[RMDB]
RNA sequence: GGGAACGACUCGAGUAGAGUCGAAAAUGCACAAUUGGCGUAGCGAACCACUCAGGGAAAUGAUAAUAAUGGCUGACCCAUCUGUUAAUUUACAAGCGGGAACCGUGGAUGACCUUAUAAUCAACUACCAACUCGCGGCCACCAUCAUUGAUGACGAAACUCCGUUAGAAUUCGUUCUAACGGAGUUAAAAGAAACAACAACAACAAC
Reactivity to DMS in 0.01 (KOAc 150mM, MgCl2 10mM, bicine 150mM(pH8.5), 24C), signal-to-noise 2, nucleotides 027 to 156: u000g050c020a110c060a100a220u000u000g000g000c030g000u020a100g030c050g010a090a140c030c030a090c130u000c030a130g030g020g000a080a090a180u000g000a100u000a060a090u000a100a040u000g020g050c010u030g050a230c010c000c010a100u020c040u000g000u000u000a110a070u000u010u010a160c070a080a100g030c000g010g000g040a090a050c090c050g120u000g000g020a090u000g000a030c020c040u020u040a070u000a080a090u000c000a020a070c050u010a060c040c010a060a190c040u000c050g000c020g030g000c040c000a080c000c000a020u000c050a140u000u000g010a100u010g010a060c000g000a120
Reactivity to 2A3 in 0.01 (KOAc 150mM, MgCl2 10mM, bicine 150mM(pH8.5), 24C), signal-to-noise 2, nucleotides 027 to 156: u100g000c000a000c010a050a140u050u070g020g000c020g050u050a040g020c020g020a010a030c020c020a060c010u070c070a030g020g000g080a030a130a130u140g110a080u020a120a010u080a070a040u210g020g040c030u010g020a050c010c060c000a040u050c040u010g030u060u020a070a060u120u120u100a060c090a110a060g030c040g040g030g000a060a010c040c030g050u080g010g050a060u020g000a060c000c040u090u050a050u040a110a070u080c000a000a010c020u040a050c010c000a010a040c010u000c010g030c010g000g000c010c000a030c010c000a010u050c000a020u040u150g100a050u180g040a050c090g080a140

Chemical mapping of a 207-nucleotide RNA with DMS and 2A3. It was measured as part of the RMDB library OK3TST. Values cover nucleotides 27 to 156. For DMS the reverse transcriptase was MarathonRT.